[RMDB]
RNA sequence: GGGAACGACUCGAGUAGAGUCGAAAAGUACCCCUUCGGGGGUACAAAAAAACCUUUGUGUACGCAGAUAAUGCGACGAGGGACGUCCCAUUGGGACGUCCUCCCCACCGUUACAUUGUAGUACACUCUGGUAAAAACAAGUCAUUCGUGACUUGAAUCAGGUAGUUACGUUCGCGUAACUACCUGAAAAAGAAACAACAACAACAAC
Reactivity to 2A3 in 0.01 (KOAc 150mM, MgCl2 10mM, bicine 150mM(pH8.5), 24C), signal-to-noise 1, nucleotides 027 to 156: g000u000a000c000c000c000c080u030u210c250g100g000g020g040g020u000a020c000a000a030a000a000a000a000a000c000c000u020u000u020g010u000g000u010a010c020g000c140a010g060a220u090a080a000u070g020c030g020a000c020g010a030g000g020g030a010c000g000u010c020c010c050a080u180u300g000g010g010a000c020g000u000c010c000u020c020c010c010c000a040c010c000g010u000u000a030c010a010u050u000g070u120a190g020u000a030c010a010c010u030c010u030g000g010u130a080a050a000a000a000c000a000a020g050u010c030a010u150u140c260g240u090g000a020c000u000u010g030a010a100

Record summary:
This 207-nucleotide RNA was probed chemically with 2A3. Values are in units of 0.01, from 0 to 300, in steps of 10. Source: RMDB library RNAMAK, as collected in RNAgym. For 2A3 the reverse transcriptase was SuperScript II with manganese. Conditions: 150 mM KOAc, 10 mM MgCl2 and 150 mM bicine (pH 8.5), 24 C.